[RMDB]
RNA sequence: GGGAACGACUCGAGUAGAGUCGAAAACCAUCGGUACGUUCGCGUACCGAUGGAAGGUACUGGAGACAGUACCAAGUCUAUGACCAUACCACCCCCAGGUAUGGAAAAAUGGAGGGACUCCACACCUCCAUACAUAGACGAGGGGGACGUGGAGGCAGCGAUAAAUUAGGUUCGCCUAAUUUAUCGCAAAAGAAACAACAACAACAAC
Reactivity to 2A3 in 0.01 (KOAc 150mM, MgCl2 10mM, bicine 150mM(pH8.5), 24C), signal-to-noise 1, nucleotides 027 to 156: c000c010a010u010c000g010g000u000a000c010g030u040u060c270g010c020g100u000a020c000c000g000a000u010g000g010a040a040g020g000u010a000c000u000g010g050a020g020a040c000a000g000u000a000c000c010a000a010g000u010c010u040a010u010g040a040c000c000a020u000a010c010c000a230c030c000c010c010c000a000g000g010u000a000u000g010g000a000a130a000a000a000u020g000g010a000g000g000g020a050c020u000c030c000a000c000a020c000c000u000c000c000a000u010a010c010a000u010a000g020a010c060g060a210g000g000g000g000g030a030c050g000u020g020g010a010g000g010c030a030